Structure probing data (2A3 and DMS) for a 177-nucleotide construct. The reactions ran in a buffer of 150 mM KOAc, 10 mM MgCl2 and 150 mM bicine (pH 8.5), at 24 C. DMS adducts were read by reverse transcription with MarathonRT. The 2A3 profile rests on 7,782 reads. It was measured as part of the RMDB library RFMREP.
RNA sequence: GGGAACGACUCGAGUAGAGUCGAAAAACAACGUGUUUUUGAGUGGGCCUGUGUCUCUGUGUGCGCCGUGUGCGGAUAGCUUGCUAUGCGUGUGUGGUUGUGUGUGGAUUGAUGUGGGUUUUAACUUGAUAUACUUCUACUUCGGUAGAAGUAUAUCAAAAGAAACAACAACAACAAC
Reactivity to 2A3 in 0.01 (KOAc 150mM, MgCl2 10mM, bicine 150mM(pH8.5), 24C), signal-to-noise 4, nucleotides 027 to 126: a000c070a030a060c120g090u070g040u070u030u020u060u120g090a060g030u060g020g010g020c030c000u040g020u010g010u030c010u010c020u050g040u000g010u010g060c010g010c000c000g030u040g020u040g000c010g020g060a020u010a030g030c040u050u130g020c010u030a030u060g140c020g010u020g020u000g000u010g000g040u080u240g020u050g000u010g020u020g010g040a090u030u190g010a020u040g000u030g000g000g000u000u010u040u060a050a010c000u000u010
Reactivity to DMS in 0.01 (KOAc 150mM, MgCl2 10mM, bicine 150mM(pH8.5), 24C), signal-to-noise 3, nucleotides 027 to 126: a070c040a100a110c200g010u000g010u000u000u000u000u000g010a100g010u010g010g000g020c040c020u010g010u000g010u000c020u000c020u000g010u000g020u000g020c040g000c020c020g020u000g020u010g020c010g010g000a050u000a040g000c010u000u010g020c010u000a020u000g000c030g030u000g010u000g000u000g000g010u000u000g060u010g010u000g010u000g000g020a090u000u010g000a080u000g010u000g010g010g010u000u000u000u010a040a110c140u000u000